The record gives the reactivity of an RNA of 177 nucleotides to DMS. The reactions ran in a buffer of 150 mM KOAc, 10 mM MgCl2 and 150 mM bicine (pH 8.5), at 24 C.
[RMDB]
RNA sequence: GGGAACGACUCGAGUAGAGUCGAAAAGAUAUGGAUCGAUGUCGGUGUGUAACGUACAGAGCAAGCUGGUCGGAAACGACCAACUUGCGACGAAGUACGUUACACACCGACCGCUCGAUCCUAAGUCGAUGCUGUAGUUCUUCGGAACUACAGCAUCAAAAGAAACAACAACAACAAC
Reactivity to DMS in 0.01 (KOAc 150mM, MgCl2 10mM, bicine 150mM(pH8.5), 24C), signal-to-noise 1, nucleotides 027 to 126: g020a140u010a300u000g000g000a010u010c000g000a020u020g030u000c000g000g020u000g050u000g000u000a010a000c000g000u020a000c000a050g010a290g010c000a000a000g010c000u000g000g000u000c000g000g000a150a170a300c000g010a020c010c020a010a000c000u000u000g000c020g030a120c230g000a080a060g000u000a000c010g010u000u020a000c010a000c000a030c000c000g010a000c020c040g000c020u000c000g000a000u000c000c010u000a000a050g000u000c090